This 177-nucleotide RNA was probed chemically with DMS. Reactivities are rounded to 0.1 and cut off at 0 and 3. DMS adducts were read by reverse transcription with MarathonRT.
RNA sequence: GGGAACGACUCGAGUAGAGUCGAAAAGAUAUGGACUAGUUGCUGAGAACGUACGACUUCGAGGAUCUAUACGGUCGGAAACGACCGAUAGGGAGAAGGUACGUUCUCAGCAACUAGUCCUAAGUCACUAUUCACUAUCCUUCGGGAUAGUGAAUAGAAAAGAAACAACAACAACAAC
Reactivity to DMS in 0.01 (KOAc 150mM, MgCl2 10mM, bicine 150mM(pH8.5), 24C), signal-to-noise 3, nucleotides 027 to 126: g000a050u000a300u020g000g000a030c000u000a010g010u010u000g010c000u000g000a010g010a010a000c010g030u020a010c030g020a290c010u000u010c000g010a090g020g000a030u000c000u010a020u010a190c020g000g000u000c010g000g000a080a110a190c000g010a000c010c000g010a010u000a000g000g000g000a010g020a010a000g000g010u010a000c000g010u000u000c000u000c000a000g010c000a000a000c000u000a000g010u000c000c000u000a000a070g000u010c040a290